[RMDB]
RNA sequence: GGGAACGACUCGAGUAGAGUCGAAAACGGCGGUGGUGAUCCUGUUGCCGAUGGUCACCUUCACGAUGGCCUACCUGAUCGUCGACGUUCCCAAGCCAGGUGACAUCCGUACCAACCAGGUCUCCACGCUGAGGAAAUGGUUCGCCAUUUCCUCAGCAAAAGAAACAACAACAACAAC
Reactivity to DMS in 0.01 (KOAc 150mM, MgCl2 10mM, bicine 150mM(pH8.5), 24C), signal-to-noise 2, nucleotides 027 to 126: c040g000g070c050g020g030u000g020g000u000g020a020u020c020c010u020g000u040u010g000c150c050g000a040u000g010g000u020c000a040c090c000u010u000c130a160c030g020a020u010g010g000c030c120u050a080c040c040u010g000a070u010c070g010u020c120g020a090c040g000u000u000c000c000c020a150a050g010c060c140a100g000g020u000g000a030c040a010u000c050c070g080u040a140c300c070a090a100c020c040a010g020g000u000c000u000c000c000a070c110
Reactivity to 2A3 in 0.01 (KOAc 150mM, MgCl2 10mM, bicine 150mM(pH8.5), 24C), signal-to-noise 5, nucleotides 027 to 126: c010g020g000c050g060g020u040g010g010u020g010a060u100c020c010u070g070u060u080g060c040c030g010a030u030g070g050u010c010a010c020c000u080u140c130a090c090g090a130u130g040g020c020c020u050a080c020c030u060g070a100u070c030g030u010c030g030a040c020g010u010u020c000c000c000a000a010g020c030c030a050g000g030u020g020a020c010a030u010c030c000g030u050a060c030c030a050a040c030c020a020g000g050u000c020u010c010c000a030c050